[RMDB]
RNA sequence: GGGAACGACUCGAGUAGAGUCGAAAAGAUUUACGGCGGGAAAGGUCCCGGGUGCGCGCCGAGGUCCCGGGUGCGGCACCGACCGAAAGGCGCGGAAACGGCACCGACCGAAACCGCCGGAAAGAAAACCUCCCAUAAUAUUCGUAUUAUGGGAGGUAAAAGAAACAACAACAACAAC
Reactivity to 2A3 in 0.01 (KOAc 150mM, MgCl2 10mM, bicine 150mM(pH8.5), 24C), signal-to-noise 1, nucleotides 027 to 126: g020a000u000u080u090a070c000g000g000c000g030g040g050a130a090a030g000g000u000c000c000c010g010g030g000u070g160c020g000c000g000c000c000g000a110g030g000u100c150c120c090g040g040g000u080g060c050g010g000c040a030c010c000g010a010c000c000g070a190a140a080g010g000c030g000c010g050g050a030a030a000c000g000g000c030a030c070c120g010a000c000c020g000a100a030a000c010c000g000c010c000g020g000a010a010a020g030a000a080a000
Reactivity to DMS in 0.01 (KOAc 150mM, MgCl2 10mM, bicine 150mM(pH8.5), 24C), signal-to-noise 3, nucleotides 027 to 126: g000a200u000u000u000a090c020g010g000c010g030g000g000a080a140a300g010g010u000c060c060c040g000g000g040u000g020c010g020c010g020c010c000g010a300g010g010u010c090c160c060g020g000g020u010g010c060g000g010c150a130c030c030g000a050c000c000g010a040a110a240g000g000c000g020c000g020g000a010a060a060c030g000g000c300a040c140c110g010a020c010c030g000a110a170a150c000c000g000c010c010g000g000a010a030a060g000a110a070a080
An RNA of 177 nucleotides, treated with 2A3 and DMS and read out base by base. It was measured as part of the RMDB library OK2TRN. Values cover nucleotides 27 to 126. DMS adducts were read by reverse transcription with MarathonRT. The RNA was probed in 150 mM KOAc, 10 mM MgCl2 and 150 mM bicine (pH 8.5) at 24 C.